[RMDB]
RNA sequence: GGGAACGACUCGAGUAGAGUCGAAAAGGCUGUUGAAAUACAUUCCUGUGCCGGCAAUACAGUGUGUAUGGAGGUCUCAAUGGCUCGGAAGUGCCAGCAAACCGGCGUAGAUAUUAGCAUACGUAUGAUAGGAUGCAUCCGUUCGCGGAUGCAUCAAGUUUUUACCUGUGUUCGCACAGGUAAAAACAAAAGAAACAACAACAACAAC
Reactivity to DMS in 0.01 (KOAc 150mM, MgCl2 10mM, bicine 150mM(pH8.5), 24C), signal-to-noise 1, nucleotides 027 to 156: g000g000c000u010g040u020u000g010a150a070a050u010a030c010a080u000u000c300c050u010g020u010g040c010c030g050g010c030a070a120u010a010c000a080g000u000g030u010g030u000a010u000g020g030a190g040g000u000c010u000c080a120a140u000g000g010c030u010c050g000g010a170a170g050u000g020c010c010a130g000c040a030a140a050c030c000g010g010c020g020u000a090g020a090u010a090u000u000a090g010c010a110u010a040c040g020u010a040u000g000a140u000a200g000g010a000u000g030c030a030u000c020c010g040u000u010c300g040c050g030g000a030u010g010c000a010u000c000a010a030
Reactivity to 2A3 in 0.01 (KOAc 150mM, MgCl2 10mM, bicine 150mM(pH8.5), 24C), signal-to-noise 3, nucleotides 027 to 156: g020g020c030u010g020u300u050g080a020a000a000u020a010c020a010u100u090c030c010u020g000u020g020c040c020g000g020c080a030a030u060a120c010a020g020u010g010u010g000u030a010u010g030g030a010g000g040u000c020u010c050a060a160u030g000g000c020u010c060g010g090a100a050g020u020g040c000c010a020g080c040a080a020a050c020c000g050g000c020g070u070a050g050a130u090a090u250u200a040g020c050a050u070a040c050g090u070a050u190g100a100u090a100g120g010a000u000g010c000a000u000c000c000g000u010u040c190g000c030g100g000a000u000g000c000a000u000c000a000a000

An RNA of 207 nucleotides, treated with DMS and 2A3 and read out base by base. Conditions: 150 mM KOAc, 10 mM MgCl2 and 150 mM bicine (pH 8.5), 24 C. For DMS, 2,364 sequencing reads were counted. Source: RMDB library M2RFPK, as collected in RNAgym. Values cover nucleotides 27 to 156.